[RMDB]
RNA sequence: GGGAACGACUCGAGUAGAGUCGAAAAAUUCUGUACAUAAAAGUCGAAAGUAUUGCUAUAGUUAAGGUUGCGCUUGCCUAUUUAGGCAUACUUCUCAGGAUGGCGCGUUGCAGUCCAACAAGAUCCACCUGACUUAGAUGUUCGCAUCUAAGUCAGGAAAAGAAACAACAACAACAAC
Reactivity to 2A3 in 0.01 (KOAc 150mM, MgCl2 10mM, bicine 150mM(pH8.5), 24C), signal-to-noise 1, nucleotides 027 to 126: a010u070u000c000u060g090u110a040c020a090u080a080a160a060a120g040u030c060g020a110a040a000g010u040a020u040u230g060c040u040a020u030a250g110u050u090a120a000g070g010u050u130g030c000g000c050u030u030g010c000c000u050a100u110u230u130a100g040g010c000a020u020a020c020u050u100c040u040c040a050g100g000a020u040g000g000c020g020c070g000u000u040g020c030a040g020u000c000c000a030a030c000a090a070g020a080u040c030c000a020
Reactivity to DMS in 0.01 (KOAc 150mM, MgCl2 10mM, bicine 150mM(pH8.5), 24C), signal-to-noise 1, nucleotides 027 to 126: a110u000u000c000u010g000u000a090c060a040u000a100a120a130a060g000u010c100g010a130a020a010g040u000a030u000u000g020c010u000a070u000a080g000u010u010a020a000g030g000u010u010g010c200g040c030u010u000g000c040c000u000a040u010u010u010a090g000g000c000a020u000a010c010u010u000c160u000c030a090g020g000a120u000g010g000c050g040c080g020u030u020g020c100a110g010u000c100c050a040a100c140a070a180g030a130u000c080c030a020